Conditions: 150 mM KOAc, 10 mM MgCl2 and 150 mM bicine (pH 8.5), 24 C. An RNA of 207 nucleotides, treated with 2A3 and read out base by base. The 2A3 profile rests on 2,108 reads.

RNA sequence: GGGAACGACUCGAGUAGAGUCGAAAAACCUUUGUGAGCCGAGUAAGGCUUGGAUUUAGUGGGAUAGUUAAACGCCCAUUGGGCGUAAUUUUUGUCCCACUUGUCAGCCUUAUAGUGCUCACUCUGGUAAAUCCGUGUCCCUUCGGGGACACGGAAAUCCUCGUUUUAGAUUCGUCUAAAACGAGGAAAAAGAAACAACAACAACAAC
Reactivity to 2A3 in 0.01 (KOAc 150mM, MgCl2 10mM, bicine 150mM(pH8.5), 24C), signal-to-noise 2, nucleotides 027 to 156: a000c010c000u010u000u000g000u000g000a000g000c000c040g090a150g150u010a020a000g000g020c020u020u110g060g010a060u220u300u160a010g000u000g060g000g000a030u020a040g060u080u110a100a220a050c020g010c030c040c090a110u060u270g000g010g010c010g000u030a090a120u040u090u050u080u030g020u010c000c000c000a000c000u000u000g000u000c000a000g000c000c000u000u000a000u020a020g190u300g040c000u000c000a010c000u000c020u000g000g020u040a100a110a100u000c000c000g000u000g000u000c000c000c000u000u040c110g040g000g000g000a000c000a000c000g000g000a040a000a000